[RMDB]
Chemical mapping of a 177-nucleotide RNA with DMS and 2A3. DMS adducts were read by reverse transcription with MarathonRT. The reactions ran in a buffer of 150 mM KOAc, 10 mM MgCl2 and 150 mM bicine (pH 8.5), at 24 C. It was measured as part of the RMDB library OK2TST.
RNA sequence: GGGAACGACUCGAGUAGAGUCGAAAAGAUGGUGCGCUUAUCGAACUUACUGGCGAAGCUCUCCUUCAACUGGAUGCCUUUACCCUCUAUGCGCAGAGCAUUUCGAUACAAGGCACAACGCAACGCAGGCAGUAUGGAAUUUCGAUUCCAUACUGCCAAAAGAAACAACAACAACAAC
Reactivity to DMS in 0.01 (KOAc 150mM, MgCl2 10mM, bicine 150mM(pH8.5), 24C), signal-to-noise 3, nucleotides 027 to 126: g010a070u000g020g030u000g000c060g000c030u000u000a060u000c020g000a030a060c190u000u020a080c100u000g000g040c060g000a110a110g000c060u000c050u000c020c050u000u010c100a080a110c120u020g000g000a080u000g010c100c000u000u000u010a110c080c030c040u000c070u020a040u010g010c060g000c170a060g000a150g010c050a020u000u000u000c030g010a030u000a040c220a040a060g000g030c010a030c050a060a080c140g000c110a040a090c060g020c200a120
Reactivity to 2A3 in 0.01 (KOAc 150mM, MgCl2 10mM, bicine 150mM(pH8.5), 24C), signal-to-noise 2, nucleotides 027 to 126: g140a080u170g020g050u080g000c050g020c030u070u020a060u090c020g030a040a070c020u120u150a070c060u110g020g030c020g020a040a010g010c000u000c000u000c010c000u020u110c030a070a060c070u070g060g020a050u050g000c000c000u090u060u130a100c030c020c020u000c020u010a050u060g020c050g000c090a030g050a000g070c010a000u050u070u060c040g010a000u010a100c080a040a020g000g010c000a000c020a050a030c030g030c020a030a040c030g020c020a030